This 177-nucleotide RNA was probed chemically with DMS and 2A3.
[RMDB]
RNA sequence: GGGAACGACUCGAGUAGAGUCGAAAAUGUAAGGGCAUUGACAAGCCUAGGUAGGUGCGUAACCUUAAAAUCCGUGAAGCCGUCCGUGUCUGAUUAAGGUACUGAUUGUGAUGACGAUAGUAAGUCAGCUUUUCUGACAUUUCGAUGUCAGAAAAGCAAAAGAAACAACAACAACAAC
Reactivity to DMS in 0.01 (KOAc 150mM, MgCl2 10mM, bicine 150mM(pH8.5), 24C), signal-to-noise 3, nucleotides 027 to 126: u040g000u000a110a110g010g000g040c030a030u010u000g000a080c150a060a140g000c030c010u000a070g030g020u020a060g010g040u000g010c160g000u010a110a060c010c000u000u010a030a040a070a090u020c020c010g020u030g000a130a150g000c030c080g000u010c000c050g030u000g020u020c020u000g000a150u040u020a110a050g000g020u000a030c070u010g020a080u000u010g000u000g010a130u010g000a050c060g010a110u010a080g010u020a080a120g010u000c040a060
Reactivity to 2A3 in 0.01 (KOAc 150mM, MgCl2 10mM, bicine 150mM(pH8.5), 24C), signal-to-noise 3, nucleotides 027 to 126: u160g040u090a020a110g020g020g030c040a030u000u070g040a030c030a120a050g000c030c000u010a000g040g070u060a010g040g000u050g060c090g050u080a040a030c010c000u030u030a110a060a000a060u070c040c000g000u020g070a100a030g010c050c060g000u000c020c040g050u010g000u000c040u030g070a110u160u070a040a020g080g000u070a070c030u030g020a120u040u110g000u040g050a110u100g030a000c030g020a040u030a050g120u060a130a060g010u030c020a040
DMS adducts were read by reverse transcription with MarathonRT.